[RMDB]
RNA sequence: GGGAACGACUCGAGUAGAGUCGAAAAGAUGGGGCAGGUGGGAAUAUACCUCGCCACCCACUUGCUCCUGAUUGAGAGAUAGACGGCGAGGGUCCGAUCAUACGAUAUAUUCCUGCUCAGCGUAUGAUCGGUUAUGAUACUUAAGACGAGCAGGUUAACUGGGAUAUCAGUUCGCUGAUAUCCCAGUAAAAGAAACAACAACAACAAC
Reactivity to 2A3 in 0.01 (KOAc 150mM, MgCl2 10mM, bicine 150mM(pH8.5), 24C), signal-to-noise 2, nucleotides 027 to 156: g090a030u080g000g010g030g030c000a000g000g000u010g030g050g130a090a000u160a040u060a170c020c000u000c000g000c000c000a000c010c000c000a000c000u000u000g000c000u000c000c000u020g020a020u060u110g060a130g000a000g000a030u090a170g070a030c040g010g010c000g000a010g010g000g000u000c000c000g010a000u000c000a000u000a020c010g000a030u070a050u060a040u300u230c010c000u000g000c000u000c000a000g000c000g020u010a000u010g000a000u000c000g000g010u020u010a010u000g040a000u100a120c100u200u200a100a030g110a060c040g000a010g000c000a000g000g020u000u010a030
This 207-nucleotide RNA was probed chemically with 2A3. It was measured as part of the RMDB library OK3TST. The 2A3 profile rests on 1,411 reads. Values cover nucleotides 27 to 156.